[RMDB]
RNA sequence: GGGAACGACUCGAGUAGAGUCGAAAAGAACGAUCUAUACUCCGCCGUAUUGAUCGGAAGAAGGCGGGAGACUGACGAAAAAGGGCCGAAAAGCCUAGGUUCGAGGCCCCGAUCCUAGGGUCAGGAAGGAUAUGAGAAUCUUCGGAUUCUCAUAUCCAAAAGAAACAACAACAACAAC
Reactivity to 2A3 in 0.01 (KOAc 150mM, MgCl2 10mM, bicine 150mM(pH8.5), 24C), signal-to-noise 4, nucleotides 027 to 126: g110a070a020c020g010a020u010c010u020a020u020a050c020u060c080c120g070c040c030g040u020a030u010u130g050a080u050c050g050g020a060a020g040a020a020g020g030c060g010g060g000a020g070a050c040u060g020a060c010g080a010a010a000a020a080g070g020g010c040c020g080a100a080a020a000g030c000c000u030a050g070g000u030u020c010g000a050g000g070c010c010c000c000g010a020u050c000c010u020a020g050g000g020u050c050a020g070g080a090a120
Reactivity to DMS in 0.01 (KOAc 150mM, MgCl2 10mM, bicine 150mM(pH8.5), 24C), signal-to-noise 4, nucleotides 027 to 126: g010a090a160c010g000a040u020c010u010a020u000a040c050u020c060c090g010c070c070g010u010a070u000u010g000a040u000c040g000g000a100a070g000a110a130g000g010c030g000g000g000a140g000a170c040u000g000a060c050g020a040a070a090a110a160g000g010g020c000c030g000a110a090a090a070g000c020c020u020a040g030g020u000u000c010g010a300g010g000c010c010c000c020g000a080u000c010c010u000a090g000g000g000u010c020a050g000g010a130a080
Chemical mapping of a 177-nucleotide RNA with 2A3 and DMS. Source: RMDB library OK1LIB, as collected in RNAgym. The RNA was probed in 150 mM KOAc, 10 mM MgCl2 and 150 mM bicine (pH 8.5) at 24 C. For DMS, 7,124 sequencing reads were counted.